Source: RMDB library 15KLIB, as collected in RNAgym. An RNA of 170 nucleotides, treated with DMS and 2A3 and read out base by base. The DMS profile rests on 20,806 reads. For 2A3, 13,886 sequencing reads were counted.
[RMDB]
RNA sequence: GGGAACGACUCGAGUAGAGUCGAAAAUCCGAUAUCCCUUCCCCCGAGAGGUCCCCCAGGAAUGGCGGGACCCCACUCUACAGGGUCCGCGUUCCAUCCUUUCUUACCUGAUGGCCGGCAUGGUCCCACCCUUGGUGCUUCGGCACCAAGAAAAGAAACAACAACAACAAC
Reactivity to DMS in 0.01 (KOAc 150mM, MgCl2 10mM, bicine 150mM(pH8.5), 24C), signal-to-noise 6, nucleotides 027 to 129: u000c060c050g010a090u080a130u050c000c020c020u000u000c000c010c010c030c070g060a090g010a150g000g000u040c030c010c020c030c030a060g020g070a050a040u000g050g020c110g000g000g000a030c080c030c000c030a070c080u030c070u000a010c120a120g030g050g030u030c010c050g020c090g010u030u020c030c010a130u050c020c000u000u000u000c060u040u020a030c070c090u040g010a110u000g020g000c110c040g020g050c070a060u040g020g000u020c040c010c020a090c060c040
Reactivity to 2A3 in 0.01 (KOAc 150mM, MgCl2 10mM, bicine 150mM(pH8.5), 24C), signal-to-noise 5, nucleotides 027 to 129: u040c010c010g030a040u050a140u190c010c000c010u020u020c000c000c000c000c000g000a010g010a010g020g030u020c010c000c000c000c010a000g040g130a080a080u090g170g070c060g030g010g010a010c000c000c000c000a030c010u090c020u080a070c040a080g000g020g020u000c000c010g030c010g070u080u030c010c000a050u040c000c010u050u120u070c020u080u070a130c020c020u030g020a040u060g030g020c000c000g040g000c020a030u080g020g000u030c000c000c000a020c020c010
As a SHAPE reagent, 2A3 marks flexible, mostly unpaired nucleotides at the ribose 2'-OH. The RNA was probed in 150 mM KOAc, 10 mM MgCl2 and 150 mM bicine (pH 8.5) at 24 C. Values are in units of 0.01, from 0 to 300, in steps of 10. Values cover nucleotides 27 to 129.